[RMDB]
RNA sequence: GGGAACGACUCGAGUAGAGUCGAAAAGGAGGAACCUUCGGGUUCCUCCCAUUACCGAGAACCUUGCUCGGUAUAAACAAGGAUCCCUUGGAAACAAGGGAAAUAUUCACGUCUUCGGACGUGAAAACCUUAUUCUAAUGUUCGCAUUAGAAUAAGGAAAAGAAACAACAACAACAAC
Reactivity to DMS in 0.01 (KOAc 150mM, MgCl2 10mM, bicine 150mM(pH8.5), 24C), signal-to-noise 6, nucleotides 027 to 126: g000g000a030g010g000a000a000c000c000u000u010c200g030g010g020u000u000c000c000u000c000c010c030a050u010u000a200c010c000g000a000g010a100a180c020c020u000u000g020c000u000c010g000g000u000a020u000a050a060a100c110a040a050g000g010a230u010c010c000c000u000u000g000g000a210a110a160c010a000a010g000g000g000a000a030a040u000a110u000u000c000a000c000g010u000c000u000u010c180g010g000a010c000g010u010g000a000a010a050a150
Reactivity to 2A3 in 0.01 (KOAc 150mM, MgCl2 10mM, bicine 150mM(pH8.5), 24C), signal-to-noise 3, nucleotides 027 to 126: g010g010a010g010g000a000a000c020c030u070u090c300g040g010g010u000u000c000c000u000c000c000c000a010u000u060a040c010c000g010a000g000a030a060c010c030u040u070g000c000u010c010g010g000u000a010u020a000a000a000c010a000a020g070g010a100u030c010c000c000u010u010g030g010a030a030a020c000a000a000g000g000g000a000a010a010u010a000u000u010c000a000c010g010u000c010u030u050c210g100g000a000c000g000u000g000a000a000a000a000